[RMDB]
RNA sequence: GGGAACGACUCGAGUAGAGUCGAAAAAAGUCUCAAGAUUAGAGGAUUCAAAGAAGAUGAAAAUUCCAUCGGCUGAGUUUACCAAAUCUUGGAAUGCGUCGACAGUUGGAUCGGAAAUCUGGUGAACUCAUACCGUACGCUUCGGCGUACGGUAUGAAAAAGAAACAACAACAACAAC
Reactivity to DMS in 0.01 (KOAc 150mM, MgCl2 10mM, bicine 150mM(pH8.5), 24C), signal-to-noise 1, nucleotides 027 to 126: a050a030g010u000c020u000c010a020a050g050a030u010u050a140g040a300g020g000a010u010u000c010a030a080a130g000a080a300g020a030u000g000a080a080a050a050u000u000c000c000a050u000c070g050g000c090u000g000a110g020u000u030u000a090c090c000a090a080a140u000c030u010u030g000g030a030a030u000g000c090g020u010c010g000a070c150a060g000u000u000g020g020a040u000c010g000g000a150a030a020u010c000u000g000g000u000g010a050a070c020